Chemical mapping of a 207-nucleotide RNA with 2A3.
For 2A3 the reverse transcriptase was SuperScript II with manganese.
The data come from the RNA Mapping Database (RMDB), library OK3TST.
Conditions: 150 mM KOAc, 10 mM MgCl2 and 150 mM bicine (pH 8.5), 24 C.
RNA sequence: GGGAACGACUCGAGUAGAGUCGAAAACAUCUUUGAACACAUCAAGACCAAAAGCAAAUGCGCAUGCUCGUAAUCCCAUUGGAACCUUCUUUAAACUAUCCUUAAUAUUAAUAAACUGUCUUCCACCUCUUGGACCUUCUUUACAAACUGUAACAUCCGUGAUAAUGCACUUCGGUGCAUUAUCACGAAAAGAAACAACAACAACAAC
Reactivity to 2A3 in 0.01 (KOAc 150mM, MgCl2 10mM, bicine 150mM(pH8.5), 24C), signal-to-noise 2, nucleotides 027 to 156: c000a050u030c000u050u110u140g070a140a040c080a020c000a220u070c020a000a040g080a070c020c040a000a060a060a000g050c060a000a030a060u120g010c040g000c020a000u020g000c000u010c010g050u030a040a100u040c010c010c010a040u030u080g020g010a050a070c000c000u080u160c070u240u170u220a100a170a090c000u090a060u060c030c010u050u130a110a070u140a240u300u130a120a020u220a200a100a010c020u110g010u000c010u010u000c040c020a040c020c000u010c010u020u010g030g000a010c030c000u070u000c020u030u070u010a010c060a000a220a030c030u090g000u110a060a020c030a080u260c040